An RNA of 177 nucleotides, treated with DMS and 2A3 and read out base by base. 2A3 is a SHAPE reagent: it acylates the 2'-hydroxyl of flexible nucleotides of all four kinds. DMS adducts were read by reverse transcription with MarathonRT.
[RMDB]
RNA sequence: GGGAACGACUCGAGUAGAGUCGAAAAACCUCAGUCUUCGGACUGAGGUGAGCGGAGCAUGGUGGCCGUGGGAACACCUCCUUGGUGACAAGGGCCCACGGGGUGCGGCACGCUUCGGCGUGCCGAACCCGUCAAGUUCCUUCGGGAACUUGACGGGAAAAGAAACAACAACAACAAC
Reactivity to DMS in 0.01 (KOAc 150mM, MgCl2 10mM, bicine 150mM(pH8.5), 24C), signal-to-noise 3, nucleotides 027 to 126: a040c010c000u000c020a010g010u000c000u000u010c220g020g000a010c000u000g000a000g000g010u000g000a030g010c090g000g000a080g000c080a070u000g010g020u010g000g010c010c020g040u000g000g000g000a140a070c110a170c130c060u020c020c010u000u000g000g000u010g010a200c020a010a020g000g000g010c020c000c010a010c020g000g000g000g000u000g010c020g020g010c000a000c000g020c000u000u000c130g000g020c000g010u000g000c000c000g010a010a040
Reactivity to 2A3 in 0.01 (KOAc 150mM, MgCl2 10mM, bicine 150mM(pH8.5), 24C), signal-to-noise 2, nucleotides 027 to 126: a000c010c000u000c000a010g000u000c010u020u150c210g130g010a010c000u000g000a010g000g000u000g000a030g020c070g020g050a040g020c070a090u100g090g040u090g110g110c000c000g010u000g000g020g000a130a070c030a070c090c000u040c000c010u030u040g020g000u080g030a050c020a020a000g010g020g020c020c000c000a000c010g010g000g000g010u090g030c010g000g000c000a000c010g020c000u010u020c140g090g000c010g000u000g010c000c000g000a010a010